An RNA of 177 nucleotides, treated with 2A3 and read out base by base. It was measured as part of the RMDB library OK1LIB.
[RMDB]
RNA sequence: GGGAACGACUCGAGUAGAGUCGAAAAGUGGGUCGAUAUUUUUGUCCCAAAUAAGACGCAGGUGUUGGCAGGAGAAGAUGAUUCUAAAAGUGGAGUUGGGGUUUCGUUUGUCUCACCCUCUCUUGUCGUCCUGGGUAGGUUUCGACCUACCCAGGACAAAAGAAACAACAACAACAAC
Reactivity to 2A3 in 0.01 (KOAc 150mM, MgCl2 10mM, bicine 150mM(pH8.5), 24C), signal-to-noise 1, nucleotides 027 to 126: g000u010g000g050g000u130c230g040a100u060a300u000u100u040u200u240g180u140c000c000c040a000a000a000u130a000a000g020a000c000g000c000a000g010g010u010g000u090u120g030g000c000a040g000g030a040g010a040a040g000a000u220g000a050u010u180c080u140a030a040a040a040g300u260g000g100a070g010u100u020g030g010g030g000u010u010u010c050g080u000u030u010g080u000c000u000c000a040c100c000c000u010c000u000c000u000u170g000u190c030